[RMDB]
RNA sequence: GGGAACGACUCGAGUAGAGUCGAAAAGGGUAGGGAAGGAAGCAUCCACAGAUCUUGAUGAUCCAAAUUGGGAUUUGGAGUGCCAAAUAAUCCUAUUUGCAGAUGUUAGGAUUAUUCCAUUCCUUCACCUAGAAUCUGCGUUCGCGCAGAUUCUAGGAAAAGAAACAACAACAACAAC
Reactivity to 2A3 in 0.01 (KOAc 150mM, MgCl2 10mM, bicine 150mM(pH8.5), 24C), signal-to-noise 4, nucleotides 027 to 126: g100g000g060u110a020g060g000g020a020a020g000g010a030a040g010c000a040u030c020c010a090c030a070g060a020u020c010u080u120g070a030u080g050a040u140c040c000a090a080a030u100u050g020g000g040a010u040u020u060g030g020a090g040u070g090c030c030a030a050a030u050a010a020u010c000c000u020a030u020u100u170g110c190a110g030a190u170g150u090u060a010g000g000a000u010u030a010u040u000c030c000a060u020u000c030c000u030u030c040a070
Reactivity to DMS in 0.01 (KOAc 150mM, MgCl2 10mM, bicine 150mM(pH8.5), 24C), signal-to-noise 2, nucleotides 027 to 126: g050g010g040u010a040g000g010g000a060a020g000g000a110a090g020c030a030u000c010c030a190c210a050g000a020u020c030u020u010g000a030u010g010a180u040c150c250a050a120a040u010u030g000g000g000a090u000u000u000g000g000a100g020u050g020c030c250a110a060a030u010a040a050u000c000c000u000a000u000u030u010g000c090a110g030a050u000g000u000u000a020g000g010a000u000u000a030u000u020c120c060a130u000u010c000c000u000u000c050a110